[RMDB]
RNA sequence: GGGAACGACUCGAGUAGAGUCGAAAAGGAAAAGUGUGACUGCUCUGACAGCAAAAACAAGCAAAUAUCUCUAGAGGGGAUUAAUCCCUCUGCUUCAAAGUAACCAAAACAAAGAAAGCUGAGCCAGUCCAAGCUUCAGAUUCGUCUGAAGCUUGGAAAAAGAAACAACAACAACAAC
Reactivity to DMS in 0.01 (KOAc 150mM, MgCl2 10mM, bicine 150mM(pH8.5), 24C), signal-to-noise 1, nucleotides 027 to 126: g020g070a030a040a110a070g000u000g000u000g000a060c090u040g040c090u000c070u030g000a130c020a020g060c170a050a010a000a060a010c140a070a070g000c110a060a040a050u050a000u010c030u000c070u040a080g000a000g000g000g000g050a140u080u120a080a200u030c000c000c000u000c000u000g000c070u010u000c130a040a000a280g010u000a050a150c110c090a100a000a060a090c110a000a100a190g000a100a030a040g050c000u000g000a110g020c040c030a070g020
Reactivity to 2A3 in 0.01 (KOAc 150mM, MgCl2 10mM, bicine 150mM(pH8.5), 24C), signal-to-noise 1, nucleotides 027 to 126: g060g000a100a000a030a060g090u040g150u030g030a010c100u060g000c010u000c060u150g070a130c010a030g120c120a050a050a000a000a000c070a150a000g030c030a010a000a050u190a000u100c030u030c030u100a000g000a000g000g050g000g060a160u220u220a120a040u060c000c000c000u000c000u000g000c000u000u030c090a000a000a090g060u080a040a010c070c050a030a030a040a040c010a000a090a000g160a070a070a000g180c120u120g030a100g070c060c010a000g000
Chemical mapping of a 177-nucleotide RNA with DMS and 2A3. DMS adducts were read by reverse transcription with MarathonRT. The RNA was probed in 150 mM KOAc, 10 mM MgCl2 and 150 mM bicine (pH 8.5) at 24 C.